RNA sequence: GGGAACGACUCGAGUAGAGUCGAAAAUCGGACGGCGGCCAUGAGUCGCGACGCAAAGCCGCGGCAAGUGGAGUUAGCGAGAAGAGACUAGGCUUUGGUUUCUUCAAGUGAAGCGGUCACCAAUCAGAAUAGCUUGCGCAGUUCGCUGCGCAAGCAAGAUAGAGAAACGUUUCGACGUUUCUCUAUCAAAAGAAACAACAACAACAAC
Reactivity to DMS in 0.01 (KOAc 150mM, MgCl2 10mM, bicine 150mM(pH8.5), 24C), signal-to-noise 2, nucleotides 027 to 156: u000c070g000g020a080c020g000g020c010g020g000c010c020a020u000g010a300g010u000c000g050c010g010a030c010g000c030a180a080a300g060c000c000g040c010g000g000c010a060a300g050u000g010g000a150g000u010u000a170g000c020g000a300g000a040a040g000a050g000a030c000u000a070g020g000c150u000u000u000g000g000u000u010u010c010u000u000c010a020a300g020u010g010a110a100g000c030g020g000u000c000a050c000c010a050a160u000c100a130g010a130a120u000a110g000c000u000u000g010c010g060c000a060g020u000u000c300g030c000u000g000c000g000c010a010a010g010c020a000a000
Reactivity to 2A3 in 0.01 (KOAc 150mM, MgCl2 10mM, bicine 150mM(pH8.5), 24C), signal-to-noise 4, nucleotides 027 to 156: u120c020g050g030a020c030g130g020c010g010g010c000c010a020u020g010a020g010u010c000g000c000g000a010c020g020c120a250a150a010g030c020c000g010c000g000g000c020a020a040g000u010g000g020a050g060u080u090a020g000c000g000a020g010a030a000g010a000g000a000c010u030a030g150g200c040u180u210u210g000g000u000u010u010c000u020u010c010a020a010g020u030g060a080a040g030c040g060g000u020c020a010c060c030a040a070u210c040a010g130a200a120u140a070g010c000u000u030g000c000g000c000a010g030u030u130c210g050c090u000g000c000g000c000a010a000g000c000a010a000

The data come from the RNA Mapping Database (RMDB), library M2RFPK. This 207-nucleotide RNA was probed chemically with DMS and 2A3. The reactions ran in a buffer of 150 mM KOAc, 10 mM MgCl2 and 150 mM bicine (pH 8.5), at 24 C. For DMS, 2,506 sequencing reads were counted. Values cover nucleotides 27 to 156.